[RMDB]
Description
The record gives the reactivity of an RNA of 207 nucleotides to DMS and 2A3. The reactions ran in a buffer of 150 mM KOAc, 10 mM MgCl2 and 150 mM bicine (pH 8.5), at 24 C.
RNA sequence: GGGAACGACUCGAGUAGAGUCGAAAAACAUAGGCCAUGCUUACGAGCAUGGCCUAUGACGAAUCUCAAGCAAUCAAGUAUUCUACUUCUAUUGCAACACUGAGGAGCUUACGAGCUCCUCAGUGAAAAAAGAGAGUAAUGUUCGCAUUACUCUCAACUUUGUACUUACCUUCGGGUAAGUACAAAGAAAAGAAACAACAACAACAAC
Reactivity to DMS in 0.01 (KOAc 150mM, MgCl2 10mM, bicine 150mM(pH8.5), 24C), signal-to-noise 1, nucleotides 027 to 156: a080c000a000u020a010g030g070c000c000a030u000g000c000u000u000a180c230g000a040g040c000a020u010g020g040c000c000u020a010u000g020a070c110g020a130a110u000c030u000c030a110a210g040c060a060a050u010c170a060a240g000u000a120u000u010c100u000a060c020u000u000c030u020a050u000u000g000c050a140a110c020a020c000u000g020a020g020g000a020g000c000u000u000a110c210g000a070g030c000u000c000c000u000c000a000g000u000g000a000a030a050a140a100a100g020a060g000a020g030u000a020a000u000g020u000u000c300g000c070a020u000u000a020c000u000c010u000c010a010a010
Reactivity to 2A3 in 0.01 (KOAc 150mM, MgCl2 10mM, bicine 150mM(pH8.5), 24C), signal-to-noise 2, nucleotides 027 to 156: a010c000a000u010a000g020g000c000c000a000u000g000c010u130u080a160c300g060a030g000c000a000u000g010g020c000c000u000a000u000g000a010c000g070a070a070u010c000u020c060a060a020g030c010a000a020u040c020a050a000g030u020a120u140u200c100u160a050c010u010u050c030u080a020u000u020g010c040a080a010c000a010c000u000g000a000g000g010a000g000c000u070u040a050c210g040a000g030c010u020c000c000u000c000a000g000u000g000a020a000a000a000a000a000g000a000g000a000g000u000a000a000u000g010u030u070c190g010c090a000u000u000a010c000u000c000u010c000a000a000